[RMDB]
RNA sequence: GGGAACGACUCGAGUAGAGUCGAAAACCUCGCUAAAUUCGUUUAGCGAGGACUUAUUUUGUUUUGGUCUUCCCGAACGCAUACGUUAGUGUGACUACCGUUGUUCGAAACAAGUAAAACAGGAAGGAUACGCACGGGUCUGUUCGCAGACCCGUAAUGUACUAUCAUGGUUCGCCAUGAUAGUACAAAAAGAAACAACAACAACAAC
Reactivity to DMS in 0.01 (KOAc 150mM, MgCl2 10mM, bicine 150mM(pH8.5), 24C), signal-to-noise 2, nucleotides 027 to 156: c000c000u000c000g020c000u010a010a000a050u010u010c270g050u000u000u000a020g000c000g020a000g050g010a000c050u010u000a020u010u000u010u000g000u010u000u000u000g040g010u000c030u000u000c000c010c000g000a050a070c060g000c100a110u010a040c040g010u000u000a050g030u000g010u010g040a130c040u000a050c070c040g010u000u010g000u000u020c060g010a070a030a070c100a100a090g000u000a030a020a040a070c030a060g010g000a060a050g000g020a160u000a050c130g030c220a060c010g050g030g010u000c000u000g010u000u020c290g020c000a030g010a010c000c000c000g010u000a010a060
Reactivity to 2A3 in 0.01 (KOAc 150mM, MgCl2 10mM, bicine 150mM(pH8.5), 24C), signal-to-noise 3, nucleotides 027 to 156: c010c000u000c000g000c000u010a010a020a010u150u110c250g010u030u010u010a000g000c000g000a010g010g000a000c030u180u140a090u090u220u070u070g070u000u060u030u070g040g010u020c000u020u000c020c040c020g010a040a020c060g000c140a070u060a170c050g010u020u060a070g010u070g150u200g240a090c000u030a040c000c060g080u100u090g030u050u070c010g020a000a130a040c030a140a000g110u210a040a080a070a040c050a010g020g020a050a020g040g030a060u090a190c090g040c040a010c010g000g000g000u000c000u000g050u060u100c270g010c080a000g010a010c000c000c000g000u000a010a000
Notes: An RNA of 207 nucleotides, treated with DMS and 2A3 and read out base by base. The DMS profile rests on 4,811 reads. Reactivities are rounded to 0.1 and cut off at 0 and 3. For 2A3, 1,412 sequencing reads were counted. Reactivities are given for positions 27 through 156. For 2A3 the reverse transcriptase was SuperScript II with manganese. DMS adducts were read by reverse transcription with MarathonRT. Conditions: 150 mM KOAc, 10 mM MgCl2 and 150 mM bicine (pH 8.5), 24 C.